[RMDB]
RNA sequence: GGGAACGACUCGAGUAGAGUCGAAAAGCAUAUUGUUCGGGAAACCGAACGCAAGUAACUUAGUUACUUAUUUAACUUCCUGUAUAUUUUUAAACCUAAUUUUGGGUUCGUAAUGCACCGCUCUUUGCAACGUAUACCAGUUCGCUGGUAUACGUUGAAAAGAAACAACAACAACAAC
Reactivity to DMS in 0.01 (KOAc 150mM, MgCl2 10mM, bicine 150mM(pH8.5), 24C), signal-to-noise 1, nucleotides 027 to 126: g010c060a060u010a190u000u020g030u000u010c000g000g020g000a160a160a170c000c010g010a000a000c010g000c300a040a020g010u000a000a010c000u000u000a230g000u000u000a010c010u000u000a110u010u000u000a130a090c080u000u010c000c000u000g010u010a070u010a010u010u000u000u020u020a110a020a030c010c010u030a060a140u000u000u000u010g010g010g000u000u000c110g030u030a060a020u000g000c040a060c120c200g040c210u010c020u010u000u010g000
Reactivity to 2A3 in 0.01 (KOAc 150mM, MgCl2 10mM, bicine 150mM(pH8.5), 24C), signal-to-noise 2, nucleotides 027 to 126: g010c000a010u130a030u180u300g040u030u000c000g000g000g000a060a050a000c000c000g010a000a020c040g020c010a020a020g000u000a000a000c090u140u180a040g020u010u000a020c000u020u030a070u150u180u070a130a110c010u020u010c010c010u000g040u060a250u020a080u110u180u000u070u200a040a050a050c000c000u050a100a170u060u190u220u220g000g000g000u000u070c030g060u030a100a060u100g050c070a060c010c040g080c070u020c010u000u000u020g030

An RNA of 177 nucleotides, treated with DMS and 2A3 and read out base by base. The DMS profile rests on 718 reads. For DMS the reverse transcriptase was MarathonRT.